[RMDB]
Background
This 177-nucleotide RNA was probed chemically with 2A3 and DMS. The 2A3 profile rests on 1,036 reads. Conditions: 150 mM KOAc, 10 mM MgCl2 and 150 mM bicine (pH 8.5), 24 C. For 2A3 the reverse transcriptase was SuperScript II with manganese. It was measured as part of the RMDB library M2PK90. DMS adducts were read by reverse transcription with MarathonRT. The DMS profile rests on 802 reads.
RNA sequence: GGGAACGACUCGAGUAGAGUCGAAAAUAAAACACGUAACGUGAGCACAGUCGGUAGUGCAGCAGGACCGAAACCUGCAGCGAAAGGGAUGAAGACCCUGUUCGCGCAAAAACCGAAGAAAAAAAAACAAUAUAUUCCGGUUCGCCGGAAUAUAUUGAAAAGAAACAACAACAACAAC
Reactivity to 2A3 in 0.01 (KOAc 150mM, MgCl2 10mM, bicine 150mM(pH8.5), 24C), signal-to-noise 1, nucleotides 027 to 126: u080a020a030a000a010c010a010c030g110u140a300a000c090g000u100g060a030g020c000a000c000a010g030u020c000g030g010u010a020g010u040g020c030a000g020c000a010g030g020a120c010c090g040a000a000a000c000c000u010g000c000a020g000c010g020a000a000a000g000g020g020a010u180g160a100a100g140a090c000c020c000u030g240u040u020c000g000c000g000c040a000a000a050a000a040c020c020g020a060a050g010a100a100a010a000a010a000a000a000a010
Reactivity to DMS in 0.01 (KOAc 150mM, MgCl2 10mM, bicine 150mM(pH8.5), 24C), signal-to-noise 1, nucleotides 027 to 126: u040a040a090a140a120c020a010c030g000u020a080a040c130g050u000g000a240g000c000a050c010a050g000u000c000g010g000u000a030g000u000g000c010a110g000c000a000g000g000a090c050c090g000a060a080a060c000c000u000g030c000a140g040c000g050a000a070a020g000g020g010a130u000g020a130a130g000a120c010c000c000u000g010u010u000c010g000c000g010c150a070a010a020a060a030c000c020g000a010a260g030a000a010a000a000a080a080a020a180a160